[RMDB]
RNA sequence: GGGAACGACUCGAGUAGAGUCGAAAAACUUCUGAUUAUAGAUGAAUGGCAUAGAGGUGUUAGAAAACAUGAGACAAAAGUAAUCUUCUUGAUGCUAGCGUCUCAGGUAAUUAGCAGGUACUAGACAGACAUAUAUUAUGUUCGCAUAAUAUAUGUCAAAAGAAACAACAACAACAAC
Reactivity to 2A3 in 0.01 (KOAc 150mM, MgCl2 10mM, bicine 150mM(pH8.5), 24C), signal-to-noise 6, nucleotides 027 to 126: a000c020u050u030c020u030g080a120u050u140a100u130a180g060a070u040g060a120a060u080g040g000c030a030u040a060g090a040g070g060u040g020u060u050a030g060a050a080a010a010c040a040u040g000a000g010a010c010a010a040a010a010g030u090a170a190u010c000u210u030c050u080u240g000a000u000g000c000u000a000g000c010g000u000c000u000c010a000g010g000u020a030a070u040u050a010g020c030a010g090g020u040a050c030u030a040g060a060c040a040
Reactivity to DMS in 0.01 (KOAc 150mM, MgCl2 10mM, bicine 150mM(pH8.5), 24C), signal-to-noise 8, nucleotides 027 to 126: a110c060u000u000c020u000g010a090u000u010a100u010a060g000a070u000g000a110a070u000g000g000c030a040u000a040g000a090g010g010u000g000u000u000a060g000a090a060a090a050c060a080u000g000a010g010a010c010a040a300a120a020g010u000a040a060u010c020u000u010c230u010u010g000a020u000g010c000u000a030g010c300g000u000c000u000c020a020g000g010u000a040a110u000u000a050g010c040a040g000g000u000a050c060u000a050g010a090c180a130
Source: RMDB library RFMREP, as collected in RNAgym.
An RNA of 177 nucleotides, treated with 2A3 and DMS and read out base by base.
Reactivities are rounded to 0.1 and cut off at 0 and 3.
The DMS profile rests on 11,776 reads.
Values cover nucleotides 27 to 126.
The RNA was probed in 150 mM KOAc, 10 mM MgCl2 and 150 mM bicine (pH 8.5) at 24 C.
For 2A3 the reverse transcriptase was SuperScript II with manganese.